[RMDB]
RNA sequence: GGGAACGACUCGAGUAGAGUCGAAAAACGCUUCACAGUGUGCGGCAAAGAAACAUUGUUUAUGCAAAGGCACUUCGCAAUGUGUGCUCAAACAUUGCUUAUUCAAACACGCUUCACAAUGUGCGACAAAACUUCACGGUCUUCGGACCGUGAAGAAGAGGGCAAAGAUCUUCGGAUCUUUGCCCUCAAAAGAAACAACAACAACAAC
Reactivity to 2A3 in 0.01 (KOAc 150mM, MgCl2 10mM, bicine 150mM(pH8.5), 24C), signal-to-noise 1, nucleotides 027 to 156: a000c020g040c030u040u060c020a000c000a030g000u000g000u000g040c040g010g000c060a070a000a120g040a000a150a020c020a000u000u080g070u060u120u080a060u090g050c110a240a000a000g140g000c020a000c020u060u070c010g070c200a190a130u050g010u000g050u000g040c070u060c100a040a020a040c000a000u000u000g000c000u000u100a210u060u040c080a000a060a090c050a020c140g000c000u100u110c020a010c020a050a020u050g020u020g090c020g140a060c060a050a170a000a000c010u000u000c000a000c010g000g000u000c000u030u070c070g110g000a000c000c000g000u020g000a000a000g000a000a000